Chemical mapping of a 177-nucleotide RNA with 2A3 and DMS. It was measured as part of the RMDB library OK1LIB.
RNA sequence: GGGAACGACUCGAGUAGAGUCGAAAAUGACUGUAACCGCAGCAAAAUAAAUAACGUAUUGGAAAAAAUGUAUAAUUCCAGGCUGAACAGGUGCUUUCUUCGAAGUGUUUGCAUUUGAAUGCAUGUGAUUCCAUGUCCGUUUCGACGGACAUGGAAUAAAAGAAACAACAACAACAAC
Reactivity to 2A3 in 0.01 (KOAc 150mM, MgCl2 10mM, bicine 150mM(pH8.5), 24C), signal-to-noise 2, nucleotides 027 to 126: u030g000a000c010u010g040u050a020a010c000c000g000c000a000g000c040a000a000a000a110u100a000a260a000u180a110a070c070g140u120a120u050u100g040g000a080a000a070a060a030a050u300g090u150a110u030a150a090u010u030c000c030a000g000g000c000u000g050a030a000c060a040g000g000u000g010c000u040u060u010c000u020u070c060g070a100a060g120u030g100u150u040u000g030c080a090u140u160u200g150a210a000u070g040c050a030u090g020u030g110
Reactivity to DMS in 0.01 (KOAc 150mM, MgCl2 10mM, bicine 150mM(pH8.5), 24C), signal-to-noise 2, nucleotides 027 to 126: u020g000a080c050u010g000u010a090a060c040c040g000c010a040g000c000a110a080a090a030u080a060a070a090u060a050a120c170g000u000a120u080u030g000g000a000a030a080a000a060a120u070g010u060a130u010a070a080u000u010c000c000a060g000g010c030u010g020a030a030c100a060g000g000u000g000c000u000u000u000c020u000u000c090g000a050a090g020u000g000u000u010u010g030c030a070u010u050u000g020a060a060u020g000c000a080u000g000u040g040